[RMDB]
RNA sequence: GGGAACGACUCGAGUAGAGUCGAAAAGAUAUGGAGUGAGCUGCAUGAUCGAAUUCGGAAACGAACAUGUGAUCAUGAACUACAGCUCCACUCCUAAGUCAAAGUGUGCGACUUCGGUCGCACACAAGUAGUAGUAGGUGUUCGCACCUACUACUACAAAAGAAACAACAACAACAAC
Reactivity to 2A3 in 0.01 (KOAc 150mM, MgCl2 10mM, bicine 150mM(pH8.5), 24C), signal-to-noise 6, nucleotides 027 to 126: g050a010u090a030u140g000g000a000g020u000g000a010g000c000u020g000c000a010u010g010a010u000c010g060a050a110u040u000c000g010g020a070a090a080c020g020a010a030c080a170u290g110u210g130a010u020c010a000u020g010a030a030c060u190a040c060a010g000c000u030c060c000a010c000u010c000c000u020a120a010g030u020c060a070a090a100g010u000g000u000g000c000g000a000c000u050u100c300g140g000u000c000g000c000a000c000a000c000a000a010
Reactivity to DMS in 0.01 (KOAc 150mM, MgCl2 10mM, bicine 150mM(pH8.5), 24C), signal-to-noise 5, nucleotides 027 to 126: g010a050u000a300u010g000g000a010g010u000g000a080g000c000u000g000c000a020u000g000a010u000c000g000a130a200u000u000c000g030g000a080a100a170c000g010a020a010c190a100u010g020u010g000a010u000c000a030u000g010a080a040c080u010a300c000a000g000c000u000c090c060a000c010u010c000c000u000a020a110g000u000c030a110a090a140g010u000g010u000g000c010g010a010c000u000u010c210g020g000u000c000g000c000a000c000a010c000a010a060
An RNA of 177 nucleotides, treated with 2A3 and DMS and read out base by base. For 2A3, 17,725 sequencing reads were counted. DMS adducts were read by reverse transcription with MarathonRT. The data come from the RNA Mapping Database (RMDB), library TTRDEL. The DMS profile rests on 6,557 reads. 2A3 adducts were read by reverse transcription with SuperScript II with manganese. The reactions ran in a buffer of 150 mM KOAc, 10 mM MgCl2 and 150 mM bicine (pH 8.5), at 24 C.